[RMDB]
RNA sequence: GGGAACGACUCGAGUAGAGUCGAAAAGAUAUGGAAUGUAACGUGAGAACUUUGAUCUCUUUCGGAAACGAAAGAGGGGAGUUCUCUACAUUCCUAAGUCAAAGACCACACGUUCGCGUGUGGUCAAGUCUUACGGUAUCUUCGGAUACCGUAAGACAAAAGAAACAACAACAACAAC
Reactivity to 2A3 in 0.01 (KOAc 150mM, MgCl2 10mM, bicine 150mM(pH8.5), 24C), signal-to-noise 2, nucleotides 027 to 126: g010a010u060a020u120g000g000a020a000u040g000u050a150a120c300g240u170g100a030g000a020a010c040u080u140u190g300a300u120c000u000c000u030u000u000c020g040g050a060a110a070c030g010a030a010a000g000a010g040g000g020g010a000g020u000u000c000u000c000u000a000c000a000u010u000c010c000u030a180a020g040u020c030a110a170a000g000a000c010c000a020c000a000c000g060u110u140c300g040c000g080u020g000u020g000g000u000c000a020a000
Reactivity to DMS in 0.01 (KOAc 150mM, MgCl2 10mM, bicine 150mM(pH8.5), 24C), signal-to-noise 1, nucleotides 027 to 126: g000a010u010a300u000g000g000a030a010u000g000u010a030a130c270g020u010g000a020g010a040a000c000u000u000u010g000a080u010c000u000c000u000u000u000c010g010g000a080a070a120c000g000a000a000a000g000a020g020g010g000g000a010g000u000u000c000u030c000u000a010c000a020u000u000c000c000u010a030a090g010u000c050a060a080a140g000a020c000c000a000c060a010c000g010u000u000c300g020c000g000u000g030u020g000g000u010c010a010a060